[RMDB]
RNA sequence: GGGAACGACUCGAGUAGAGUCGAAAAUAGUGUGAUAAGCAGCUUCAAAAAGUCUGGGACCAUAGAGUCCAUAGUUGAUGCUGUGGUCGGUGAUAUGGACAGAGCAGUUCAAAACACCAGGACCGAGCAUGCCAUAGAGAGAGCGAAACAGCUUUUCUCAAACAACCUGGUUCGCCAGGUUGUUUGAAAAAGAAACAACAACAACAAC
Reactivity to DMS in 0.01 (KOAc 150mM, MgCl2 10mM, bicine 150mM(pH8.5), 24C), signal-to-noise 1, nucleotides 027 to 156: u000a040g010u030g000u000g020a070u010a090a230g000c020a070g000c030u020u000c040a100a060a070a140a060g030u000c110u020g000g010g010a050c000c050a160u000a130g030a170g010u000c010c000a010u010a000g010u000u000g000a030u000g030c010u010g000u000g010g000u000c090g000g000u030g000a060u000a230u020g010g010a050c010a140g000a180g030c140a080g000u000u000c030a030a040a140a230c020a030c000c010a040g040g040a050c040c010g000a060g020c000a030u000g030c000c000a110u010a050g010a100g000a060g000a070g000c070g020a050a080a070c040a120g010c030u000u000u000u010c020
Reactivity to 2A3 in 0.01 (KOAc 150mM, MgCl2 10mM, bicine 150mM(pH8.5), 24C), signal-to-noise 1, nucleotides 027 to 156: u180a010g030u030g020u020g080a050u030a090a090g000c030a000g000c000u030u040c080a050a090a070a030a040g090u040c150u240g030g030g000a020c050c010a130u100a240g100a040g050u000c000c030a010u060a000g050u020u120g030a020u040g000c000u040g000u040g070g060u020c010g000g000u000g010a050u030a060u220g000g000a020c050a050g190a030g110c080a040g040u010u010c000a000a000a000a100c000a010c000c020a040g200g020a000c000c000g000a030g000c000a000u070g020c030c000a010u140a020g060a000g010a010g030a010g060c000g010a080a130a030c060a020g070c070u050u020u050u030c110

An RNA of 207 nucleotides, treated with DMS and 2A3 and read out base by base. The RNA was probed in 150 mM KOAc, 10 mM MgCl2 and 150 mM bicine (pH 8.5) at 24 C. For 2A3, 628 sequencing reads were counted. Source: RMDB library OK3TST, as collected in RNAgym. For DMS, 1,940 sequencing reads were counted.